Chemical mapping of a 177-nucleotide RNA with DMS and 2A3. The data come from the RNA Mapping Database (RMDB), library OK1LIB.
RNA sequence: GGGAACGACUCGAGUAGAGUCGAAAACAGGGUGCUUAUGUAGCUGGUAACGGAUAUAUCUCAUAUGUGGCGUACAUUGAGAUAAGUUACUUACUUACUAGAUAUGAAUCGGUGCCAGGAGCGACGAUCAAGGGAUGCUCUUCGGGGCAUCUCUUGAAAAAGAAACAACAACAACAAC
Reactivity to DMS in 0.01 (KOAc 150mM, MgCl2 10mM, bicine 150mM(pH8.5), 24C), signal-to-noise 9, nucleotides 027 to 126: c070a120g010g010g020u000g010c020u000u010a050u020g010u000a020g010c070u000g000g000u010a010a010c080g000g010a170u030a110u010a020u000c010u000c010a020u060a010u000g010u010g010g020c190g020u040a050c010a020u000u000g000a010g000a020u000a010a200g000u010u010a050c060u000u010a070c090u000u010a060c030u000a040g000a060u010a060u020g010a080a060u010c070g010g010u000g000c020c030a070g000g000a060g010c060g010a070c120g000a140
Reactivity to 2A3 in 0.01 (KOAc 150mM, MgCl2 10mM, bicine 150mM(pH8.5), 24C), signal-to-noise 9, nucleotides 027 to 126: c030a020g040g020g030u050g010c010u080u050a040u190g090u060a040g020c050u040g010g000u010a020a010c030g030g030a020u040a010u010a020u140c010u000c010a030u060a040u270g040u040g170g130c150g090u170a020c000a010u010u020g000a000g000a010u010a020a020g020u010u040a030c000u030u020a020c010u050u030a020c020u040a030g080a120u090a040u170g130a110a050u070c040g030g010u030g020c010c010a030g040g030a050g020c040g050a060c030g020a030